[RMDB]
RNA sequence: GGGAACGACUCGAGUAGAGUCGAAAAGGCUUAUGUGACGACGUGCGCCCGCGAGGGCGGCAGGGACGAUGCGAGGCAGUGCCGCAUCGCCGCCAUGUGGGCCGCCGGUUCGUUCGCCGCCCGGCGACGUGCCGGCCAUGUUCGCAUGGCCGGCACGAAAAGAAACAACAACAACAAC
Reactivity to DMS in 0.01 (KOAc 150mM, MgCl2 10mM, bicine 150mM(pH8.5), 24C), signal-to-noise 2, nucleotides 027 to 126: g000g010c030u000u010a070u000g030u010g000a050c020g000a100c080g020u010g030c070g020c000c010c000g030c070g000a140g010g030g000c010g010g020c120a130g010g010g030a090c230g010a000u000g010c000g000a120g010g020c090a080g020u010g010c080c010g010c030a020u000c000g000c010c010g010c020c030a040u000g030u000g010g010g010c040c080g020c010c020g000g000u000u000c010g020u010u020c040g010c020c010g020c140c070c120g010g010c090g010a050
Reactivity to 2A3 in 0.01 (KOAc 150mM, MgCl2 10mM, bicine 150mM(pH8.5), 24C), signal-to-noise 1, nucleotides 027 to 126: g040g020c080u130u190a080u300g090u130g030a030c080g000a000c050g130u150g030c050g000c000c010c030g000c030g080a180g060g080g000c060g000g010c000a020g040g110g000a050c100g000a020u000g030c050g050a100g110g030c170a150g130u100g260c020c010g050c000a010u020c010g000c010c000g000c000c000a040u160g000u030g030g000g000c040c010g020c020c020g000g000u000u040c000g000u000u060c030g000c020c010g000c010c000c000g000g040c070g010a020
This 177-nucleotide RNA was probed chemically with DMS and 2A3. The 2A3 profile rests on 1,800 reads. It was measured as part of the RMDB library OK2TRN.